[RMDB]
RNA sequence: GGGAACGACUCGAGUAGAGUCGAAAACCUGUUAUCUGACCAAUAACAGAAUGCACCACAGCGUAAAAUCAUCUGAUUGGGUGAGUUGGUCGCACCGCCAUUUGAUGAACGAACGCCAAGCCUAAGCACUACGAGUAUGUGUUCGCACAUACUCGAACAGAUUAAGUUACUUCGGUAACUUAAUCUGAAAAGAAACAACAACAACAAC
Reactivity to 2A3 in 0.01 (KOAc 150mM, MgCl2 10mM, bicine 150mM(pH8.5), 24C), signal-to-noise 9, nucleotides 027 to 156: c010c000u000g000u000u000a010u000c000u000g000a000c000c000a000a000u000a010a000c000a010g070a100a110u180g030c070a050c070c020a030c060a050g020c010g030u070a050a120a070a080u020c000a000u000c020u070g080a180u090u120g060g000g000u010g010a020g000u000u020g000g000u000c010g030c020a000c000c020g060c050c020a060u080u070u120g010a000u000g000a050a050c090g030a080a010c010g000c010c040a060a050g030c020c040u170a130a030g060c070a060c140u200a070c070g000a000g000u000a000u000g010u010g010u030u080c130g030c030a000c000a000u000a000c000u000c000g000a000a010
Reactivity to DMS in 0.01 (KOAc 150mM, MgCl2 10mM, bicine 150mM(pH8.5), 24C), signal-to-noise 4, nucleotides 027 to 156: c050c000u010g030u010u000a010u000c000u000g030a040c050c060a300a010u000a020a030c000a020g000a080a110u000g010c090a120c020c030a060c090a080g020c050g030u010a060a070a110a110u000c000a030u000c030u000g020a090u000u000g020g010g010u000g000a300g010u000u000g000g000u000c020g000c020a040c000c010g020c080c030a090u000u000u000g020a030u000g010a050a110c070g020a130a070c040g020c010c030a060a180g020c060c020u000a080a090g020c040a100c050u000a170c010g000a030g000u000a010u000g020u000g020u000u000c300g020c030a010c000a010u000a000c010u000c010g000a030a110
This 207-nucleotide RNA was probed chemically with 2A3 and DMS. The reactions ran in a buffer of 150 mM KOAc, 10 mM MgCl2 and 150 mM bicine (pH 8.5), at 24 C. For 2A3, 17,949 sequencing reads were counted. The DMS profile rests on 8,941 reads.